[RMDB]
RNA sequence: GGGAACGACUCGAGUAGAGUCGAAAAUGCACCUAAUUUAUUGUGUUUGCAAUGUUCUAUGAAGCCUAUAAUUGUGUUCCCCUCGCUAUCCACUACUGCAAAUCUAAUGCUGUAUAUGGACGUCGGGGAUAUAGAAAGAGUUCGCUCUUUCUAUAUCAAAAGAAACAACAACAACAAC
Reactivity to DMS in 0.01 (KOAc 150mM, MgCl2 10mM, bicine 150mM(pH8.5), 24C), signal-to-noise 9, nucleotides 027 to 126: u030g010c070a090c060c080u020a070a080u020u020u010a050u020u010g010u010g010u000u010u010g010c040a050a060u010g010u010u010c060u010a080u010g000a080a080g010c030c040u010a060u010a060a090u010u010g010u010g010u000u000c000c000c000c010u000c020g010c050u000a170u000c000c010a030c300u000a010c010u000g000c010a020a070a110u030c230u030a080a110u010g010c000u000g000u000a010u010a140u000g000g000a020c100g010u000c020g010g000g010
Reactivity to 2A3 in 0.01 (KOAc 150mM, MgCl2 10mM, bicine 150mM(pH8.5), 24C), signal-to-noise 9, nucleotides 027 to 126: u110g010c010a040c020c040u090a140a210u070u090u150a120u070u130g050u020g040u070u080u070g020c030a050a060u080g050u140u040c020u060a090u140g070a070a020g020c010c010u090a090u080a180a140u100u100g030u010g010u080u030c000c000c000c010u000c000g010c010u030a020u010c000c000a010c020u020a000c000u020g000c010a040a050a120u080c060u200a130a090u070g000c000u000g020u010a020u010a050u090g010g000a010c010g020u060c020g010g010g000